[RMDB]
RNA sequence: GGGAACGACUCGAGUAGAGUCGAAAAGCACUCUUUGGGGCCCGCAUCCCGAACAUCAGCCGCCAUCCACCGGUCGGUAAGGAAUAUGCGUCACCCGAGACUGGCGAGAUUUGGCCCUCCUUAGUGACCCGACAUCCGUAUUCGUACGGAUGUCGGGAAAAGAAACAACAACAACAAC
Reactivity to 2A3 in 0.01 (KOAc 150mM, MgCl2 10mM, bicine 150mM(pH8.5), 24C), signal-to-noise 2, nucleotides 027 to 126: g020c000a020c060u060c000u170u190u160g060g030g020g000c010c000c000g000c000a020u080c000c000c000g010a080a000c020a060u130c070a110g000c000c010g040c000c030a110u040c000c000a020c000c000g000g000u050c060g050g130u180a040a000g040g040a120a020u200a000u050g000c030g000u010c020a170c000c000c030g030a030g000a080c110u060g010g000c010g020a170g010a150u060u040u110g010g050c000c040c000u000c040c030u110u000a030g020u010g180a010